[RMDB]
RNA sequence: GGGAACGACUCGAGUAGAGUCGAAAAGAUAUGGAGAUCCGUAUGGGAGCUUACGAUCGGAAACGAUCGAAUAAGCUUUGAUCAUACUGUAGAUCUCCUAAGUCAAACACACGGUUCGCCGUGUGAACACUGGACAAAUCUUCGGAUUUGUCCAGUGAAAAGAAACAACAACAACAAC
Reactivity to DMS in 0.01 (KOAc 150mM, MgCl2 10mM, bicine 150mM(pH8.5), 24C), signal-to-noise 2, nucleotides 027 to 126: g000a030u000a300u010g010g000a000g000a000u000c030c100g000u000a010u000g000g000g000a010g020c000u010u000a050c010g010a000u030c000g010g000a080a060a110c010g000a010u000c000g000a100a150u000a000a000g000c010u000u010u000g010a100u010c010a020u000a010c010u010g050u010a110g010a020u000c000u000c010c000u000a000a090g010u010c020a130a160a240c010a010c010a020c020g040g010u000u050c250g020c000c010g010u010g000u000g000a110a180
Reactivity to 2A3 in 0.01 (KOAc 150mM, MgCl2 10mM, bicine 150mM(pH8.5), 24C), signal-to-noise 1, nucleotides 027 to 126: g010a000u040a050u140g010g000a030g010a020u050c040c000g010u000a030u010g040g010g000a000g010c000u020u000a010c010g010a020u010c020g010g060a000a020a020c000g020a010u000c000g030a090a180u120a030a010g000c020u280u090u050g040a010u010c000a010u010a040c040u150g090u280a120g040a040u000c010u000c000c000u010a030a000g010u010c030a070a140a050c000a000c000a000c020g020g080u070u100c300g040c100c010g000u000g000u000g000a000a000